[RMDB]
RNA sequence: GGGAACGACUCGAGUAGAGUCGAAAAAUGCUGCUAUUAUCCCCAUGUUAUAGAUGGGGAAACUGGGGCACAGCCAGAUUAAGUAACUUGCCCAGGGUCAUAGAGCUGAGAGAUUGUGCCCAGAGAAUCUGGCUCCUUAGCAAUUGUGCCAGGCUGCCCACGGCUAUUAAUUCGUUAAUAGCCGUGGAAAAGAAACAACAACAACAAC
Reactivity to DMS in 0.01 (KOAc 150mM, MgCl2 10mM, bicine 150mM(pH8.5), 24C), signal-to-noise 1, nucleotides 027 to 156: a130u000g030c020u000g040c010u000a100u000u010a200u000c010c010c000c000a020u000g010u000u000a170u010a100g000a110u000g030g030g020g000a000a020a010c070u010g020g000g000g010c030a000c050a070g020c060c010a040g000a190u000u000a050a210g010u010a100a080c080u000u000g020c030c020c020a250g030g020g000u050c080a060u010a130g010a250g030c010u030g000a110g010a120g030a140u010u010g020u000g000c000c000c000a100g020a100g010a030a070u050c000u000g010g030c000u010c050c060u000u000a050g010c040a070a140u000u000g000u000g040c060c020a110g000g000c030u010g000c080
Reactivity to 2A3 in 0.01 (KOAc 150mM, MgCl2 10mM, bicine 150mM(pH8.5), 24C), signal-to-noise 2, nucleotides 027 to 156: a010u060g010c010u010g020c030u080a060u200u040a090u210c030c010c010c000a010u030g080u160u240a260u210a260g090a050u010g000g000g000g000a000a000a030c020u060g010g020g010g000c040a040c030a020g000c000c000a030g010a110u090u020a090a060g090u010a050a120c020u050u120g020c000c030c020a020g010g010g030u090c010a050u030a040g090a000g020c070u070g030a010g020a000g020a200u020u140g000u060g070c000c040c000a000g010a010g020a040a030u040c030u010g040g000c000u020c000c020u050u090a050g000c010a070a170u080u110g020u000g010c000c000a000g000g010c040u060g000c000
This 207-nucleotide RNA was probed chemically with DMS and 2A3. In probing experiments dimethyl sulfate is read out at A N1 and C N3, which are open when not base-paired. The data come from the RNA Mapping Database (RMDB), library OK3TST. The reactions ran in a buffer of 150 mM KOAc, 10 mM MgCl2 and 150 mM bicine (pH 8.5), at 24 C. Values cover nucleotides 27 to 156.